[RMDB]
RNA sequence: GGGAACGACUCGAGUAGAGUCGAAAACAUAGCGUUUCAGAAUGUGCGCCAUUAACAUUGUUUAUGCAAGCACGUUUCGCAAUGUACGGCGCAGAAACAUUGCCAACACAAAUACGCUUCACGAUGUAAAACAUCGGUGCGUUCGCGCACCGAUGAAUCAAGAAUGUAACUUCGGUUACAUUCUUGAAAAAGAAACAACAACAACAAC
Reactivity to DMS in 0.01 (KOAc 150mM, MgCl2 10mM, bicine 150mM(pH8.5), 24C), signal-to-noise 3, nucleotides 027 to 156: c050a100u000a030g020c020g010u000u000u000c040a100g030a200a130u000g030u010g010c020g020c050c010a160u000u000a080a070c070a050u000u010g020u010u000u040a090u020g010c040a080a080g030c050a110c060g040u000u000u010c150g050c050a030a020u000g020u000a060c030g040g020c050g010c000a070g010a060a070a090c020a050u000u000g030c000c030a080a050c070a130c050a080a070a130u010a030c020g000c010u000u000c030a080c060g000a070u000g010u000a050a080a040a210c000a020u000c010g010g000u010g020c000g040u000u000c250g050c040g040c000a010c000c020g020a000u000g000a020a120
Reactivity to 2A3 in 0.01 (KOAc 150mM, MgCl2 10mM, bicine 150mM(pH8.5), 24C), signal-to-noise 8, nucleotides 027 to 156: c050a060u100a010g010c010g020u020u100u140c110a100g030a110a070u090g030u020g050c000g020c020c010a060u140u170a040a020c030a060u050u070g070u050u120u080a080u120g040c070a060a110g080c070a030c150g020u040u080u080c040g000c000a010a010u010g000u020a030c070g010g000c010g010c020a000g020a000a040a000c020a020u020u100g110c030c060a110a020c050a060c020a120a120a020u150a030c020g010c020u080u130c100a080c100g090a040u100g050u250a050a080a080a030c010a000u000c000g000g000u000g000c000g000u020u030c160g000c000g000c030a000c030c000g000a000u000g000a000a010